An RNA of 177 nucleotides, treated with 2A3 and read out base by base. Reactivities are given for positions 27 through 126. For 2A3, 818 sequencing reads were counted.
RNA sequence: GGGAACGACUCGAGUAGAGUCGAAAAAGAGGUACUACGGUACCUCAUUUCGGAUCUCCGUAGUUUUGACCAUUUUAUCCAACCUAAUAAUGUGAUAAAUGCAUCUUAACUGCGGUGAUCUGGAUAAACCGGGAUUCAGGUUCGCCUGAAUCCCGGUAAAAGAAACAACAACAACAAC
Reactivity to 2A3 in 0.01 (KOAc 150mM, MgCl2 10mM, bicine 150mM(pH8.5), 24C), signal-to-noise 2, nucleotides 027 to 126: a000g000a000g000g020u010a000c030u070a060c220g070g000u000a000c040c000u000c000a000u050u020u030c000g000g000a000u000c000u000c000c000g000u000a020g020u000u010u000u000g020a030c000c000a010u060u150u020u000a000u010c020c010a050a200c100c050u290a270a120u280a280a090u190g150u110g010a000u010a000a000a000u000g000c020a040u040c020u000u000a000a000c000u000g000c000g010g000u000g000a000u000c000u000g000g020a010u040a030a060

The data come from the RNA Mapping Database (RMDB), library RFM100.
Conditions: 150 mM KOAc, 10 mM MgCl2 and 150 mM bicine (pH 8.5), 24 C.